[RMDB]
RNA sequence: GGGAACGACUCGAGUAGAGUCGAAAAUACGCGAGGUUCGCCUCGCGUAAAAGAGGAGCGUAAAGGUGAGCGUACGUAGUGCUGUACAUCGUUCCUACACGAAUGCACAUGGUUUCGACCAUGUGAAGCUAUCAUCCUCUUUCGAGAGGAUGAUAGCAAAAGAAACAACAACAACAAC
Reactivity to DMS in 0.01 (KOAc 150mM, MgCl2 10mM, bicine 150mM(pH8.5), 24C), signal-to-noise 4, nucleotides 027 to 126: u010a010c000g020c000g000a010g020g030u000u020c210g010c000c000u000c000g010c000g010u000a000a020a080a110g010a070g010g000a030g010c020g010u000a060a080a120g020g020u020g000a070g000c110g010u000a060c170g020u010a110g020u010g030c020u020g020u010a060c060a110u000c010g000u000u000c000c020u000a070c140a100c210g000a090a080u000g000c010a020c000a020u000g000g010u000u000u000c240g000a050c000c000a000u000g000u000g000a020a090
Reactivity to 2A3 in 0.01 (KOAc 150mM, MgCl2 10mM, bicine 150mM(pH8.5), 24C), signal-to-noise 4, nucleotides 027 to 126: u060a010c000g000c000g000a000g030g030u070u100c170g060c060c000u000c000g000c020g010u000a000a000a000a010g120a010g020g000a020g000c020g060u140a040a110a100g110g030u070g070a030g010c040g020u040a040c120g080u090a050g090u070g160c040u060g040u080a010c010a060u030c020g010u010u000c010c000u040a050c080a010c050g150a110a030u230g010c010a000c000a010u010g030g000u010u080u130c180g060a010c000c000a000u000g000u010g000a010a010